[RMDB]
Background: An RNA of 207 nucleotides, treated with 2A3 and read out base by base. It was measured as part of the RMDB library OK3TST. Reactivities are given for positions 27 through 156.

RNA sequence: GGGAACGACUCGAGUAGAGUCGAAAAUACAAUACCCUGUGUGGGGAUGGGGGUCAAGGGAACAACCUUACUGUCAUUAGGUCUCACCUCUCUUCUUUUCCCCAGGAUGUAGAGGUGGAGAAAACAAACCACUUUGCAAUAGUGAAUUUGAGAACGGGAAUUUAGCAUCUUUCGAGAUGCUAAAUUCAAAAGAAACAACAACAACAAC
Reactivity to 2A3 in 0.01 (KOAc 150mM, MgCl2 10mM, bicine 150mM(pH8.5), 24C), signal-to-noise 2, nucleotides 027 to 156: u100a020c050a010a060u140a150c010c030c030u020g060u020g030u100g080g010g030g030a020u030g040g010g000g000g000u100c080a040a080g000g030g020a060a060c050a080a060c040c020u040u100a070c020u060g050u160c030a040u100u180a030g000g030u000c010u010c000a000c000c020u000c000u000c000u000u000c000u000u210u050u020c030c010c020c000a000g000g000a010u020g090u160a010g000a000g000g000u040g030g000a060g010a000a060a000a030c020a000a070a000c030c040a080c090u140u140u230g080c090a000a040u000a060g030u050g050a100a140u090u130u110g040a050g020a070a010c050g040g040
Annotation:
Conditions: 150 mM KOAc, 10 mM MgCl2 and 150 mM bicine (pH 8.5), 24 C.